[RMDB]
RNA sequence: GGGAACGACUCGAGUAGAGUCGAAAAGACAUCAAUGAAGGAGGUAACAUUUGGGAAGACCUUUCGUUUACUCUAUGAGACAUUUUCUCCCGCGAGCGGGAGGAAUGUCUCUAUAGGGCUUCCUCCAACUCACUUAUUCGUUCGCGAAUAAGUGAGUAAAAGAAACAACAACAACAAC
Reactivity to 2A3 in 0.01 (KOAc 150mM, MgCl2 10mM, bicine 150mM(pH8.5), 24C), signal-to-noise 2, nucleotides 027 to 126: g050a000c020a120u120c000a030a090u090g120a080a050g010g020a020g000g010u040a010a020c010a040u030u060u050g030g000g000a020a000g040a050c000c000u020u020u020c010g010u010u020u060a010c010u010c000u000a010u010g000a000g000a000c000a000u020u020u020u020c000u000c000c000c000g000c030g090a040g080c000g000g000g000a000g000g000a010a000u000g000u000c000u000c000u010a000u000a000g000g000g000c000u070u010c000c000u000c000c000a000

Conditions: 150 mM KOAc, 10 mM MgCl2 and 150 mM bicine (pH 8.5), 24 C. Chemical mapping of a 177-nucleotide RNA with 2A3.